[RMDB]
RNA sequence: GGGAACGACUCGAGUAGAGUCGAAAACGAGCGUGCUGACUGAUUUUGUUAUGACUGGUAAGGCCAGCUUUAGCGACUUCGCAAGAAGCGUUAUCGGUGACAUUACCAACAUGCUUAUCAAGAUGGCGCUGUUUAACUCGCUUUCUGCCGCGUUUGGACUAUGCCUUACCUUCGGGUAAGGCAUAGUAAAAGAAACAACAACAACAAC
Reactivity to DMS in 0.01 (KOAc 150mM, MgCl2 10mM, bicine 150mM(pH8.5), 24C), signal-to-noise 1, nucleotides 027 to 156: c000g000a040g030c000g060u000g000c000u000g000a300c120u000g000a050u000u000u000u010g000u010u000a090u000g000a230c040u000g000g020u010a030a050g010g070c010c000a000g010c000u000u000u000a030g020c000g000a140c020u000u000c000g020c280a160a250g000a020a010g010c020g030u010u000a010u000c070g000g020u010g010a010c010a040u000u000a140c000c000a020a120c020a070u000g000c010u000u000a030u000c010a040a030g020a210u000g040g000c000g000c050u000g030u000u000u000a050a020c030u000c010g020c010u000u000u000c010u000g000c000c030g010c090g030u000u000u000g010g020
Reactivity to 2A3 in 0.01 (KOAc 150mM, MgCl2 10mM, bicine 150mM(pH8.5), 24C), signal-to-noise 4, nucleotides 027 to 156: c100g040a000g020c010g050u300g170c010u010g030a010c000u000g010a020u030u110u130u150g110u150u300a060u040g070a150c070u010g000g000u000a010a000g030g000c000c000a030g060c100u010u000u000a000g000c000g260a300c020u010u000c010g010c030a070a020g000a000a000g010c000g010u020u000a010u010c040g030g060u000g010a020c030a050u000u010a000c000c000a000a060c010a020u000g010c000u010u000a000u010c000a010a000g010a030u030g000g000c000g000c010u000g000u000u020u000a030a050c010u010c020g070c040u060u140u030c040u120g050c020c020g040c030g070u020u000u140g050g010

This 207-nucleotide RNA was probed chemically with DMS and 2A3. For 2A3, 3,513 sequencing reads were counted. Conditions: 150 mM KOAc, 10 mM MgCl2 and 150 mM bicine (pH 8.5), 24 C. DMS adducts were read by reverse transcription with MarathonRT. Reactivities are given for positions 27 through 156.